Chemical mapping of a 207-nucleotide RNA with DMS and 2A3. For DMS the reverse transcriptase was MarathonRT.
RNA sequence: GGGAACGACUCGAGUAGAGUCGAAAAAUCAUAACCUACAUUGUUACCGUGUAUUAAUUUAUGAUUAAACACAUAUCCAUUAUCGUAAUACACACUACGCAUACCAUUCGCCUUAUAUGGUUGCAUAAAUAACAUUUUUAGUGUAUUAUUAGGGCUAGUCUUAGACCUCAUUCGUGAGGUCUAAGACAAAAGAAACAACAACAACAAC
Reactivity to DMS in 0.01 (KOAc 150mM, MgCl2 10mM, bicine 150mM(pH8.5), 24C), signal-to-noise 1, nucleotides 027 to 156: a020u000c030a090u010a070a120c090c050u000a030c060a020u000u000g020u000u000a080c060c100g010u000g000u000a060u000u020a080a130u000u000u010a020u000g000a090u000u000a090a110a060c030a080c080a220u010a150u010c000c020a210u010u010a080u010c060g000u020a000a020u000a010c020a010c000a300c180u000a040c100g000c000a090u000a030c000c010a090u010u000c110g000c000c010u000u000a120u010a040u000g030g030u020u000g000c010a020u030a010a020a160u020a080a180c040a300u000u000u000u000u000a040g000u010g000u050a060u000u000a040u000u000a060g010g040g010c040u000a170
Reactivity to 2A3 in 0.01 (KOAc 150mM, MgCl2 10mM, bicine 150mM(pH8.5), 24C), signal-to-noise 4, nucleotides 027 to 156: a000u090c030a030u030a050a080c010c030u030a030c020a120u150u160g060u180u110a130c070c070g000u030g020u020a130u120u180a200a070u070u050u070a040u130g020a020u030u130a070a210a000c060a010c030a110u120a060u120c060c060a090u100u130a080u250c050g040u030a020a010u030a020c020a010c030a030c100u160a070c100g010c010a010u080a300c010c000a000u010u030c050g020c000c000u040u000a050u010a000u090g000g000u000u000g000c010a000u130a120a120a010u080a040a050c030a050u050u060u050u120u300a060g000u020g010u070a060u070u020a090u090u050a120g000g000g010c000u040a000